RNA sequence: GGGAACGACUCGAGUAGAGUCGAAAAAGCCAUACCAUUACGAUGGUAUGGCAAGUCCGUGACGGCGAUGGAUCCCGCCUGGCCGAUGCCGAACUGCCGAUCAGGCUGAUGGUUCCUGCCCCGUCAAAAAACGUAAAGCACUUCGGUGCUUUACGAACACUUAGUCAGAGUUCGCUCUGACUAAGUGAAAAGAAACAACAACAACAAC
Reactivity to DMS in 0.01 (KOAc 150mM, MgCl2 10mM, bicine 150mM(pH8.5), 24C), signal-to-noise 1, nucleotides 027 to 156: a070g010c000c020a020u030a000c000c000a030u020u000a070c250g020a200u000g010g020u000a010u000g000g000c000a000a010g000u000c020c000g030u000g020a050c030g030g000c090g000a190u000g010g010a030u000c020c010c050g000c010c020u000g000g010c010c030g010a140u000g020c020c010g010a110a110c130u010g010c000c000g010a040u000c000a020g000g070c000u000g020a100u010g020g000u010u000c020c030u010g010c030c090c020c030g020u000c000a010a020a030a060a140a130c020g020u010a010a020a020g000c010a030c000u000u000c300g030g000u000g000c000u000u000u000a010c000g010a040a140
Reactivity to 2A3 in 0.01 (KOAc 150mM, MgCl2 10mM, bicine 150mM(pH8.5), 24C), signal-to-noise 4, nucleotides 027 to 156: a000g000c000c010a000u000a000c000c000a010u040u040a050c270g100a030u010g000g010u000a000u000g000g000c000a000a010g020u000c010c010g020u030g000a010c010g010g020c110g050a030u050g010g000a010u020c000c000c000g000c000c000u000g000g000c000c010g060a080u140g010c030c050g210a210a130c110u210g010c010c010g000a010u010c000a000g000g000c030u090g040a180u170g020g000u010u010c000c010u060g010c010c020c000c000g000u000c000a060a030a000a040a030a000c000g000u000a000a000a010g000c000a000c010u020u110c220g090g000u000g000c000u000u000u000a000c000g000a010a000